This 177-nucleotide RNA was probed chemically with DMS and 2A3.
Conditions: 150 mM KOAc, 10 mM MgCl2 and 150 mM bicine (pH 8.5), 24 C.
For 2A3, 2,012 sequencing reads were counted.
Reactivities are given for positions 27 through 126.
RNA sequence: GGGAACGACUCGAGUAGAGUCGAAAAACAAAGAGCGUACAUCUCUCUCAGACUGUACGACAGUCUGACUCUCUCCUACAACUCGCUGACGAGAGAGAGAGAGCGUUCAAAGCAGCGAGUAAAAAAAUCUAGAGUAAGACUUCGGUCUUACUCUAGAAAAAGAAACAACAACAACAAC
Reactivity to DMS in 0.01 (KOAc 150mM, MgCl2 10mM, bicine 150mM(pH8.5), 24C), signal-to-noise 2, nucleotides 027 to 126: a120c100a070a120a110g000a020g010c040g030u030a110c080a120u000c050u010c020u000c120u000c010a030g010a030c020u000g010u010a090c290g000a160c020a020g000u000c010u020g000a150c040u000c010u010c020u000c000c090u000a120c160a060a020c020u000c010g020c000u000g010a130c200g010a050g000a060g000a030g000a020g000a040g030a020g000c050g010u000u000c030a080a070a100g000c050a020g010c010g010a000g000u020a000a000a080a200a040a050a040
Reactivity to 2A3 in 0.01 (KOAc 150mM, MgCl2 10mM, bicine 150mM(pH8.5), 24C), signal-to-noise 2, nucleotides 027 to 126: a000c090a010a180a020g050a010g000c040g010u130a030c090a220u010c020u000c010u020c000u010c030a000g000a000c010u010g020u180a160c090g100a030c110a000g000u010c010u010g020a030c000u000c000u010c000u000c030c000u060a100c030a150a020c020u000c000g050c030u030g010a070c090g010a030g000a010g000a010g000a000g000a000g000a000g010c020g030u020u050c060a170a030a030g060c010a000g030c010g060a000g030u110a120a080a010a010a000a010a000
The DMS profile rests on 1,133 reads.